The record gives the reactivity of an RNA of 207 nucleotides to 2A3 and DMS. 2A3 adducts were read by reverse transcription with SuperScript II with manganese. For 2A3, 1,345 sequencing reads were counted. Conditions: 150 mM KOAc, 10 mM MgCl2 and 150 mM bicine (pH 8.5), 24 C. DMS adducts were read by reverse transcription with MarathonRT. It was measured as part of the RMDB library M2RFPK.
RNA sequence: GGGAACGACUCGAGUAGAGUCGAAAAAGUUAGGUUCGCUAUGGUGCAACUCUUUAAGGCAAUAACGAACUAAUUCUAAGCAAGUAAUGGAGAAAUUCCAGGGUCACUAUCUAGCCAUAAUAGUGCUGUAAGUGACUUAGAUUCGUCUAAGUCACAAGGUACCUAGUUUCUUCGGAAACUAGGUACCAAAAGAAACAACAACAACAAC
Reactivity to 2A3 in 0.01 (KOAc 150mM, MgCl2 10mM, bicine 150mM(pH8.5), 24C), signal-to-noise 3, nucleotides 027 to 156: a000g070u080u060a040g020g110u010u030c010g000c000u010a040u060g170g000u080g040c060a140a220c040u070c080u190u200u200a150a040g070g000c040a050a060u030a070a100c030g000a020a000c010u070a020a000u070u130c020u100a030a020g030c030a020a080g060u110a070a100u210g070g000a040g030a180a180a050u150u010c020c000a010g000g000g040u080c010a000c040u010a030u050c030u030a040g020c000c010a010u030a080a030u030a060g020u070g010c060u080g080u120a140a040g020u000g000a000c000u000u000a000g000a000u010u030c070g020u060c110u000a000a000g000u000c000a000c000a000a020
Reactivity to DMS in 0.01 (KOAc 150mM, MgCl2 10mM, bicine 150mM(pH8.5), 24C), signal-to-noise 1, nucleotides 027 to 156: a040g000u000u000a090g020g020u010u000c020g020c020u000a020u020g020g060u000g000c020a070a040c100u010c080u000u010u020a080a060g000g000c030a090a020u010a000a030c000g010a000a020c010u000a020a070u000u010c060u000a160a150g020c060a090a160g000u000a050a120u010g060g010a070g020a120a090a130u000u000c000c010a040g000g030g040u000c010a000c030u000a070u010c010u000a200g020c070c040a040u000a120a060u000a050g010u000g020c020u000g010u000a040a070g020u000g020a020c000u000u000a010g000a070u000u000c300g070u000c000u010a000a010g020u000c010a000c000a040a090